[RMDB]
RNA sequence: GGGAACGACUCGAGUAGAGUCGAAAACGACCAUACCACGGUGUUGCAUGCUUGCCGCAAGAUUGAACAAUUGCGUGAAGAGAGUCACGACAUCAAAGAAGAUUUCUCUAACUUAAUCAGAACAUUAGCUUAGAUAGACCUUCGGGUCUAUCUAAGCAAAAGAAACAACAACAACAAC
Reactivity to DMS in 0.01 (KOAc 150mM, MgCl2 10mM, bicine 150mM(pH8.5), 24C), signal-to-noise 1, nucleotides 027 to 126: c070g000a100c020c030a080u000a030c060c000a080c080g000g020u000g000u000u010g050c050a120u000g010c070u000u000g060c030c000g030c020a030a030g030a080u000u030g000a000a080c250a060a020u000u000g060c000g000u000g030a090a110g000a130g010a070g010u000c040a250c000g000a050c080a010u000c170a010a100a090g000a060a210g030a110u020u020u000c080u010c000u000a050a030c060u000u000a030a130u000c070a060g000a130a040c180a060u000u000a170